[RMDB]
RNA sequence: GGGAACGACUCGAGUAGAGUCGAAAAACGGUGCGGAAGUUCGCGCUUCCGUGAAACGCAAAAAUCGGACGGUGGCUGCAAGUCGCAUCGCAAAACCGCGGCAAGUGGAGUUAGCGAGAGGAGGCUGAAACCAUCCAACACUUCGGUGUUGGAUGAAGCGUUGUUGUAUGUUCGCAUACAACAACGCAAAAGAAACAACAACAACAAC
Reactivity to 2A3 in 0.01 (KOAc 150mM, MgCl2 10mM, bicine 150mM(pH8.5), 24C), signal-to-noise 1, nucleotides 027 to 156: a000c020g030g000u100g000c000g010g010a000a000g010u070u180c050g020c030g000c060u040u030c020c000g010u000g000a060a040a000c080g030c050a000a030a010a010a100u100c010g010g000a000c030g080g000u020g010g020c050u070g000c050a050a000g000u020c010g000c010a050u090c040g000c040a010a090a020a000c040c020g010c030g010g040c070a090a050g010u040g090g070a060g030u080u110a040g040c030g030a040g010a030g130g000a010g000g030c010u050g000a080a030a010c040c000a000u000c000c000a000a000c000a000c000u060u080c300g090g000u000g010u010u010g000g020a010u000g020a030a010